[RMDB]
This 207-nucleotide RNA was probed chemically with DMS and 2A3. Reactivities are rounded to 0.1 and cut off at 0 and 3. For DMS the reverse transcriptase was MarathonRT. The RNA was probed in 150 mM KOAc, 10 mM MgCl2 and 150 mM bicine (pH 8.5) at 24 C.
RNA sequence: GGGAACGACUCGAGUAGAGUCGAAAACUUCGAAGCGGUGAUAUAACAGGACGGUGCUAUUGUCAUCGCGACCGAUGUUGACAACGUACAUAGUGUUCCUGAUGGUGGGUUUGAAGGAUAGCACGAGUCCGUCUUCGAGCGCGACCGUCUGCGCGACCUACCAGGUACGGUUCGCCGUACCUGGUAGAAAAGAAACAACAACAACAAC
Reactivity to DMS in 0.01 (KOAc 150mM, MgCl2 10mM, bicine 150mM(pH8.5), 24C), signal-to-noise 1, nucleotides 027 to 156: c010u010u020c010g030a070a300g030c050g020g040u040g020a130u000a040u010a080a120c010a080g050g030a070c030g000g030u000g050c010u020a070u000u000g060u000c010a070u000c030g000c000g080a110c060c010g010a100u000g000u000u010g010a220c040a030a060c120g030u000a130c030a140u020a110g000u000g020u020u000c060c010u000g010a180u010g010g030u010g000g010g000u000u020u000g030a030a080g000g020a120u020a130g000c030a120c030g020a140g020u020c030c040g010u000c060u000u020c020g030a100g000c020g000c020g000a090c030c040g030u000c030u000g000c010g020c020g040a070c130
Reactivity to 2A3 in 0.01 (KOAc 150mM, MgCl2 10mM, bicine 150mM(pH8.5), 24C), signal-to-noise 2, nucleotides 027 to 156: c030u080u060c000g000a180a000g030c020g000g110u070g010a040u040a040u050a120a110c040a080g050g030a010c030g080g000u040g000c080u100a060u050u130g010u080c000a010u000c080g030c010g010a000c000c070g050a070u060g000u050u060g010a050c080a100a030c020g100u140a080c060a110u080a080g020u030g010u100u010c000c000u050g030a060u080g010g080u030g010g100g000u020u010u180g030a060a010g060g020a080u060a140g030c030a000c070g010a050g050u040c030c000g000u000c060u090u030c070g060a110g000c050g000c040g070a120c040c000g030u000c150u110g000c040g030c050g030a050c000